An RNA of 177 nucleotides, treated with DMS and 2A3 and read out base by base. The reactions ran in a buffer of 150 mM KOAc, 10 mM MgCl2 and 150 mM bicine (pH 8.5), at 24 C. For 2A3 the reverse transcriptase was SuperScript II with manganese. Source: RMDB libraries RFM100 and RFMREP, as collected in RNAgym. Reactivities are given for positions 27 through 126.
RNA sequence: GGGAACGACUCGAGUAGAGUCGAAAAGACUUAAAGAUAUUAUCUAUCUAUAGAUAGAUCAAUUUCUUUCCUAGACUUUUGUCUACUCGAUUCAACUAAACGAAAUUUUGUCCUUCAGCACACAUGUUAAAUGUGUUAUGUUCGCAUAACACAUUUAAAAAGAAACAACAACAACAAC
Reactivity to DMS in 0.01 (KOAc 150mM, MgCl2 10mM, bicine 150mM(pH8.5), 24C), signal-to-noise 5, nucleotides 027 to 126: g010a160c010u000u000a000a010a000g000a010u000a020u000u000a050u010c000u010a000u000c000u040a220u030a230g000a010u000a010g000a010u000c080a010a010u000u000u000c000u000u000u010c260c140u020a030g010a100c010u000u000u000u010g020u000c010u010a010c000u010c010g000a020u000u010c010a070a240c100u010a020a080a100c130g010a050a070a130u010u010u020u010g010u000c020c020u000u000c070a060g010c060a040c100a050c130a050u020g000u000
Reactivity to 2A3 in 0.01 (KOAc 150mM, MgCl2 10mM, bicine 150mM(pH8.5), 24C), signal-to-noise 9, nucleotides 027 to 126: g010a020c010u040u060a010a010a000g000a000u010a010u070u030a000u000c000u000a000u000c010u040a300u140a290g000a000u000a000g000a000u010c040a010a030u000u040u000c000u010u010u010c020c040u050a060g010a130c000u020u020u020u040g050u010c000u000a010c000u000c010g010a000u020u010c020a060a050c040u140a110a060a060c090g140a090a120a130u140u160u060u100g060u050c020c000u080u120c040a030g070c050a020c010a020c010a080u120g030u110